Structure probing data (2A3) for a 177-nucleotide construct. 2A3 adducts were read by reverse transcription with SuperScript II with manganese. For 2A3, 427 sequencing reads were counted. The RNA was probed in 150 mM KOAc, 10 mM MgCl2 and 150 mM bicine (pH 8.5) at 24 C.

[RMDB]
RNA sequence: GGGAACGACUCGAGUAGAGUCGAAAAAGUGUGGACGUCGCAUCAUUCUCAUACGAUGUCCACAUGCGUGGGAACAAAUGUCCCUCCUUCCACGUGUGGUGGAAGAGUUACUGCGCACAAGGGACCGGGGUCGGCCUAUCUUCGGAUAGGCCGACCCAAAAGAAACAACAACAACAAC
Reactivity to 2A3 in 0.01 (KOAc 150mM, MgCl2 10mM, bicine 150mM(pH8.5), 24C), signal-to-noise 1, nucleotides 027 to 126: a000g070u070g000u000g060g000a000c010g000u010c020g040c070a070u040c000a230u100u300c090u080c000a090u070a190c000g010a000u000g000u000c000c010a000c000a000u000g000c000g040u060g000g000g070a000a070c030a000a110a070u110g090u020c000c030c000u010c000c060u000u000c030c000a000c000g210u300g250u190g300g000u000g050g000a000a000g000a030g000u080u000a090c000u010g120c000g000c000a030c040a120a040g040g000g070a000c020c040g000